This 177-nucleotide RNA was probed chemically with 2A3 and DMS. For DMS, 1,474 sequencing reads were counted.
RNA sequence: GGGAACGACUCGAGUAGAGUCGAAAACAACCUGGAAGAUACUCAAUCCUGGCGAAUGGUGCUUGACGGGGUGGCCUCACUGGGUGAAUGGGAUAUUGCUACCUUUGCCUACUACCAAAAGGAUAAACAGAGAUGAUUACUUCGGUAAUCAUCUCUGAAAAGAAACAACAACAACAAC
Reactivity to 2A3 in 0.01 (KOAc 150mM, MgCl2 10mM, bicine 150mM(pH8.5), 24C), signal-to-noise 2, nucleotides 027 to 126: c000a000a100c010c000u020g020g070a070a020g030a050u130a160c030u040c140a030a100u000c000c020u060g030g000c000g030a060a060u120g070g050u060g020c050u060u080g060a070c050g050g000g000g000u040g030g020c000c000u000c010a010c040u050g040g000g050u050g010a080a100u130g000g040g000a030u080a060u140u140g030c040u050a060c000c000u040u030u030g000c000c000u030a090c030u070a090c020c010a100a030a070a020g080g000a070u200a070a050a000
Reactivity to DMS in 0.01 (KOAc 150mM, MgCl2 10mM, bicine 150mM(pH8.5), 24C), signal-to-noise 2, nucleotides 027 to 126: c110a120a120c020c020u000g010g010a040a090g030a110u000a040c070u000c080a110a100u020c020c020u000g000g000c080g040a070a060u010g000g030u000g000c060u000u020g000a110c070g050g000g000g000u010g000g020c020c070u010c060a050c060u000g000g030g030u000g000a090a040u000g010g030g000a130u000a130u010u020g010c060u000a060c040c010u000u000u000g040c030c010u000a070c120u000a080c080c060a040a070a090a080g000g000a140u000a020a090a190
The RNA was probed in 150 mM KOAc, 10 mM MgCl2 and 150 mM bicine (pH 8.5) at 24 C.